[RMDB]
RNA sequence: GGGAACGACUCGAGUAGAGUCGAAAAGAGGCUCCAAGAGUAGUAGGACUGGGAACAUAUGAGAAAGCAUGAGCUCUAUCCAUCUAUCCAUCCCCUCCCAUUCGCUAGAAUGUUGCAGGUGGAGAUUAUAUAAUACUGGCUUCGGCCAGUAUUAUAUAAAAGAAACAACAACAACAAC
Reactivity to DMS in 0.01 (KOAc 150mM, MgCl2 10mM, bicine 150mM(pH8.5), 24C), signal-to-noise 2, nucleotides 027 to 126: g010a080g020g010c060u000c040c070a080a170g010a040g000u000a080g000u000a130g000g000a110c040u000g000g010g010a090a090c060a050u000a070u010g010a100g000a080a030a120g000c060a060u010g000a080g010c020u020c080u000a100u000c010c010a070u020c040u000a090u010c080c060a110u000c000c020c000c000u010c030c050c010a050u000u000c050g010c230u010a100g000a030a020u000g000u000u010g020c080a040g010g010u000g030g010a090g000a140u000u000